Overview: Chemical mapping of a 177-nucleotide RNA with 2A3 and DMS. The 2A3 profile rests on 3,811 reads. The RNA was probed in 150 mM KOAc, 10 mM MgCl2 and 150 mM bicine (pH 8.5) at 24 C. The DMS profile rests on 4,833 reads. It was measured as part of the RMDB library M2PK50.
RNA sequence: GGGAACGACUCGAGUAGAGUCGAAAAGUAAGAUGAUUCGUCAUCUUACGAACCCGAUGAAGCGGCAGAUACCGAGCUUCAUACAUCUAAGAGUGCAAAUAAUGGCGCGUGGUUUCGACCACGCGAAGCUAGAGAGGGAAUUCGUUCCCUCUCUAGCAAAAGAAACAACAACAACAAC
Reactivity to 2A3 in 0.01 (KOAc 150mM, MgCl2 10mM, bicine 150mM(pH8.5), 24C), signal-to-noise 3, nucleotides 027 to 126: g010u000a010a000g000a020u020g020a010u030u090c130g070u000c100a000u000c000u000u000a000c000g000a020a030c010c010c000g020a020u020g010a000a030g000c040g180g000c100a060g100a300u180a200c030c040g040a040g030c010u010u000c010a000u020a050c040a110u070c050u120a120a090g090a040g170u080g060c050a090a060a140u180a150a120u270g220g000c000g000c000g010u000g010g010u020u040u130c220g070a030c020c000a010c000g000c000g000a000a010
Reactivity to DMS in 0.01 (KOAc 150mM, MgCl2 10mM, bicine 150mM(pH8.5), 24C), signal-to-noise 4, nucleotides 027 to 126: g000u000a000a000g000a010u010g010a010u020u010c160g010u000c000a000u000c000u000u000a000c000g010a080a170c000c000c000g010a030u010g010a020a010g020c010g000g010c080a110g010a160u010a090c050c040g030a170g010c010u000u000c010a030u000a110c120a060u000c080u000a090a110g000a070g020u000g010c110a080a070a050u020a090a070u000g000g010c020g010c000g000u000g000g010u000u010u010c150g020a030c000c000a010c000g000c000g000a000a050